[RMDB]
RNA sequence: GGGAACGACUCGAGUAGAGUCGAAAACGGGGGCCGCCUUGUUGUGAAAUAUAGUGACGGUGUGGCGUCCACGAUAUCGGGUUCGGUGGCCUGCGAGAGUGUGAAACCAUCACCUGUGGUUACCGUGCAUCUAUGUAUCUUUCGAGAUACAUAGAUGAAAAGAAACAACAACAACAAC
Reactivity to DMS in 0.01 (KOAc 150mM, MgCl2 10mM, bicine 150mM(pH8.5), 24C), signal-to-noise 9, nucleotides 027 to 126: c050g010g000g010g000g010c050c020g020c030c030u000u000g010u000u000g010u010g000a110a090a070u010a060u010a080g010u000g010a060c050g010g010u010g030u000g020g010c180g010u000c030c030a040c030g010a070u000a050u000c050g010g010g010u000u000c090g010g020u000g000g010c020c010u000g010c070g010a100g010a140g010u010g010u000g010a070a090a100c070c060a050u010c050a060c040c040u000g020u000g010g010u000u000a060c020c020g010u010g010
Reactivity to 2A3 in 0.01 (KOAc 150mM, MgCl2 10mM, bicine 150mM(pH8.5), 24C), signal-to-noise 8, nucleotides 027 to 126: c010g010g000g010g020g010c000c000g000c000c010u040u090g030u030u050g040u050g080a070a120a010u200a020u050a060g100u070g050a030c020g040g030u080g060u050g150g060c020g110u010c040c010a020c020g020a020u060a030u110c050g020g050g000u090u080c030g030g050u030g020g010c000c020u030g020c050g030a110g000a020g020u090g010u040g090a090a030a030c040c020a030u130c020a030c020c020u050g020u030g030g020u020u030a030c000c020g020u030g030